[RMDB]
RNA sequence: GGGAACGACUCGAGUAGAGUCGAAAAGCCGGCUUGCCCCACGCGGAGCGCGCUUUCGCGGCGCCGUCGGCGACGGCGGGCACCGUGCGCACGUACGUCGCGAUCGCGCCGAUGUCCGCAUCGCUCAAUAUCACCAGUCGUUCGCGACUGGUGAUAUAAAAGAAACAACAACAACAAC
Reactivity to DMS in 0.01 (KOAc 150mM, MgCl2 10mM, bicine 150mM(pH8.5), 24C), signal-to-noise 2, nucleotides 027 to 126: g010c030c040g000g040c020u000u000g030c040c010c020c080a120c180g020c050g010g000a080g000c040g000c090g020c060u000u000u000c050g020c030g000g020c020g020c260c130g010u010c070g040g000c040g000a030c050g000g010c020g000g000g040c100a050c060c080g000u010g020c070g020c000a050c030g000u000a040c060g020u000c040g030c000g000a040u000c200g000c020g000c030c010g010a010u010g000u000c000c010g030c010a120u010c030g020c060u000c110a170
Reactivity to 2A3 in 0.01 (KOAc 150mM, MgCl2 10mM, bicine 150mM(pH8.5), 24C), signal-to-noise 1, nucleotides 027 to 126: g020c000c000g010g050c080u100u180g040c000c000c040c020a050c080g000c020g040g000a030g040c120g010c020g030c050u080u070u120c080g000c010g030g000c010g040c020c040g040u030c020g060g000c010g000a030c040g050g100c060g010g050g000c070a020c020c040g100u210g140c060g080c000a030c030g020u140a050c030g070u040c010g030c000g000a070u070c060g030c000g000c000c030g040a030u050g070u000c000c020g060c030a030u060c030g010c030u030c040a110
Conditions: 150 mM KOAc, 10 mM MgCl2 and 150 mM bicine (pH 8.5), 24 C. This 177-nucleotide RNA was probed chemically with DMS and 2A3. For DMS the reverse transcriptase was MarathonRT.